[RMDB]
RNA sequence: GGGAACGACUCGAGUAGAGUCGAAAACACCCCGCGUUCGCGCGGGGUGAAACAGGUAGUUGCUAUCUCAAUUACCUGAACAGGCCAUGGUCUGCAUAGCAAAAACUGAUGACUUCGGUCAUCAGAAGUAGCUUAAAUGGUUCGCCAUUUAAGCUACAAAAGAAACAACAACAACAAC
Reactivity to DMS in 0.01 (KOAc 150mM, MgCl2 10mM, bicine 150mM(pH8.5), 24C), signal-to-noise 3, nucleotides 027 to 126: c020a010c000c000c000c000g020c000g030u000u020c190g050c020g070c000g000g000g030g030u000g010a010a040a100c010a020g000g030u000a010g000u000u000g010c230u010a100u010c170u000c010a010a020u000u000a010c000c010u010g000a110a120c080a040g000g000c010c040a090u000g040g020u000c030u000g000c080a060u000a100g000c140a090a040a090a060a100c010u000g010a020u000g010a000c010u000u010c170g010g000u000c000a010u000c000a000g000a060a080
Reactivity to 2A3 in 0.01 (KOAc 150mM, MgCl2 10mM, bicine 150mM(pH8.5), 24C), signal-to-noise 5, nucleotides 027 to 126: c010a000c000c020c000c020g000c000g010u020u050c280g000c010g000c000g090g000g020g000u000g000a030a000a000c010a000g010g000u010a010g000u020u030g020c080u180a110u300c040u030c140a000a020u000u000a010c010c010u000g000a050a030c020a020g010g000c030c020a130u250g080g000u010c020u050g040c070a120u110a110g070c040a030a050a040a100a130c010u000g000a000u000g000a000c000u020u060c280g090g000u000c000a010u010c000a010g000a010a010